This 177-nucleotide RNA was probed chemically with 2A3 and DMS. It was measured as part of the RMDB library OK2TRN. Reactivities are given for positions 27 through 126.
RNA sequence: GGGAACGACUCGAGUAGAGUCGAAAACGUUAGAAGUUGGGAAUGAUGUCUAUAACACAAUAGCUUCACUAGAGUCCCUUGCAUAUGGGGCAGUCCAAUUACACGACAGAAGCGUCAAUCAUGCAGGCUUAGUGAUACUCUUCGGAGUAUCACUAAGAAAAGAAACAACAACAACAAC
Reactivity to 2A3 in 0.01 (KOAc 150mM, MgCl2 10mM, bicine 150mM(pH8.5), 24C), signal-to-noise 4, nucleotides 027 to 126: c020g030u020u080a090g020a250a080g080u050u050g040g000g040a060a150u080g040a040u030g120u040c020u040a060u090a230a120c080a000c040a220a020u020a010g000c010u050u010c010a050c050u040a040g040a040g190u080c010c000c000u000u080g050c030a030u040a040u180g020g010g020g030c020a010g040u000c000c000a010a030u090u140a100c140a030c110g090a010c040a060g170a170a020g070c020g160u030c020a040a120u100c030a020u050g010c020a000g090g000
Reactivity to DMS in 0.01 (KOAc 150mM, MgCl2 10mM, bicine 150mM(pH8.5), 24C), signal-to-noise 6, nucleotides 027 to 126: c100g010u010u010a090g000a080a100g000u000u000g010g000g010a100a120u010g010a020u000g010u010c020u000a040u010a100a100c240a100c220a070a030u000a040g010c010u000u000c020a040c080u000a110g000a120g010u000c010c000c000u000u010g010c090a050u000a090u000g000g010g010g030c030a090g000u010c010c060a020a070u010u010a090c220a100c150g010a040c050a050g000a070a070g010c040g010u000c080a050a060u000c140a040u000g010c040a070g010g010
DMS adducts were read by reverse transcription with MarathonRT. For 2A3, 3,805 sequencing reads were counted. The DMS profile rests on 5,768 reads.